[RMDB]
RNA sequence: GGGAACGACUCGAGUAGAGUCGAAAACAAGCCCAGCACUGGGGCAGGUUAGCAGUGGCAAGCUCACAUAGAAGUGGGUACCACAGGGGUGAAGUAAGAGGUGCACCCACAGAGCUGAGCGGGGGGAAAGUUAAGAGACUUUCGAGUCUCUUAACUUAAAAGAAACAACAACAACAAC
Reactivity to DMS in 0.01 (KOAc 150mM, MgCl2 10mM, bicine 150mM(pH8.5), 24C), signal-to-noise 6, nucleotides 027 to 126: c090a130a150g020c000c000c000a070g030c050a070c050u000g010g000g010g020c050a060g010g010u000u010a100g010c050a080g020u000g010g010c090a160a110g030c010u000c010a040c050a180u000a140g010a110a160g010u000g010g000g000u000a070c110c020a050c080a100g000g000g000g010u010g010a090a080g020u020a080a090g000a090g010g010u010g000c120a030c010c010c010a050c030a060g000a100g010c100u000g010a050g020c030g000g010g000g000g010g000a120
Reactivity to 2A3 in 0.01 (KOAc 150mM, MgCl2 10mM, bicine 150mM(pH8.5), 24C), signal-to-noise 4, nucleotides 027 to 126: c010a010a010g030c000c010c010a010g040c050a030c040u040g010g010g010g060c040a020g090g140u110u160a030g010c040a010g020u020g050g040c030a030a050g000c010u020c010a020c010a040u190a080g120a300a020g020u010g010g010g000u030a040c010c020a040c040a030g020g030g010g020u090g060a100a030g050u150a120a030g060a040g090g020u050g040c040a020c000c040c000a020c010a010g060a010g030c080u010g010a000g010c000g000g010g000g010g020g010a080